[RMDB]
An RNA of 207 nucleotides, treated with 2A3 and DMS and read out base by base. The DMS profile rests on 5,106 reads. DMS adducts were read by reverse transcription with MarathonRT. The 2A3 profile rests on 17,458 reads. The reactions ran in a buffer of 150 mM KOAc, 10 mM MgCl2 and 150 mM bicine (pH 8.5), at 24 C. For 2A3 the reverse transcriptase was SuperScript II with manganese.
RNA sequence: GGGAACGACUCGAGUAGAGUCGAAAAACACUCACGUGAGAGAGAUCGAACGAUCGUGUACGAACGAACUCUCACACUCGAGUGAACGUACGUACACGAGAACGAUCUCGAACGAGUACGUUCACACGAACGAGAGUACUCACUCUCUCGAACACGAGAAUACUCAUAGCUUCGGCUAUGAGUAUUCAAAAGAAACAACAACAACAAC
Reactivity to 2A3 in 0.01 (KOAc 150mM, MgCl2 10mM, bicine 150mM(pH8.5), 24C), signal-to-noise 9, nucleotides 027 to 156: a000c060a010c010u030c000a060c060g040u160g010a040g000a000g000a000g010a050u040c030g030a090a070c080g050a140u030c020g020u030g020u080a050c040g020a050a000c010g020a070a020c030u030c010u050c050a040c030a050c090u090c070g010a020g000u010g020a020a000c000g000u010a010c000g010u010a010c000a010c020g000a010g010a030a030c060g050a090u020c000u000c010g010a020a010c020g000a010g010u080a100c010g000u000u000c010a040c020a020c130g050a080a010c040g000a000g000a000g020u030a070c030u030c050a020c010u050c000u010c000u000c020g030a080a020c060a010c110g100a080
Reactivity to DMS in 0.01 (KOAc 150mM, MgCl2 10mM, bicine 150mM(pH8.5), 24C), signal-to-noise 3, nucleotides 027 to 156: a100c090a130c030u000c020a120c110g010u000g020a160g000a170g020a010g020a090u000c010g010a070a160c070g010a180u000c010g020u000g040u000a080c040g030a110a230c010g010a050a170c000u000c000u000c010a100c140a110c110u000c090g040a090g000u000g000a030a120c000g010u000a080c010g030u010a080c020a060c000g030a020g020a040a170c150g010a110u000c010u000c010g040a050a080c060g000a300g010u000a060c010g000u000u010c010a030c020a170c060g030a110a130c090g000a040g020a020g010u000a300c090u010c140a240c040u010c000u000c010u000c000g010a060a140c040a100c060g000a300